[RMDB]
RNA sequence: GGGAACGACUCGAGUAGAGUCGAAAACAGUCAUGGUGGCCAACACCUGUAGUCCCAUCUACUCUGGAGGAUGAGGCAGGAGCAUCCCUUAAGCCCAGGAAUUCGAGGCAGCAGUGACCCUUGCUCAGUUUGUCACUCCAUUCGUGGAGUGACAAACAAAAGAAACAACAACAACAAC
Reactivity to DMS in 0.01 (KOAc 150mM, MgCl2 10mM, bicine 150mM(pH8.5), 24C), signal-to-noise 1, nucleotides 027 to 126: c090a080g000u000c060a070u000g020g070u000g020g020c060c140a110a160c050a020c040c020u010g040u000a120g000u000c020c010c030a140u010c090u000a140c090u000c090u000g000g000a070g010g000a110u000g010a130g000g000c050a020g000g000a040g000c070a050u000c030c020c030u000u000a120a080g020c040c000c010a160g000g000a020a080u020u000c100g010a130g000g030c040a070g000c040a030g030u010g000a070c040c020c010u000u030g010c020u000c050a140